[RMDB]
RNA sequence: GGGAACGACUCGAGUAGAGUCGAAAAACGGUCAAAUACGUAUGACCGAAUGAGCAUAACAGGGCCACCCCAAAGCGUUCACAUUGUGGCCCCUGUCAGAUUCUGGUAAAUCUGCGAGUUCUGCUAAAUUAGGUAACUCUCUUCGGAGAGUUACCAAGAACUAAAAAUUCUUCGGAAUUUUUAGUUCAAAAGAAACAACAACAACAAC
Reactivity to 2A3 in 0.01 (KOAc 150mM, MgCl2 10mM, bicine 150mM(pH8.5), 24C), signal-to-noise 2, nucleotides 027 to 156: a030c010g000g000u010c060a160a120a040u240a090c180g060u190a120u070g030a000c010c000g050a000a110u160g020a020g000c010a010u020a100a030c000a000g010g000g030c010c020a000c040c010c030c050a090a180a090g190c090g070u140u200c070a110c030a210u060u120g010u000g020g000c010c040c000c000u040g080u100c010a000g000a110u070u040c040u210g180g010u070a000a040a070u000c000u030g000c060g010a120g050u050u050c050u030g000c000u030a040a110a170u270u180a100g000g000u000a000a000c010u000c000u010c010u030u030c100g000g000a000g010a000g000u000u000a000c000c000a000a000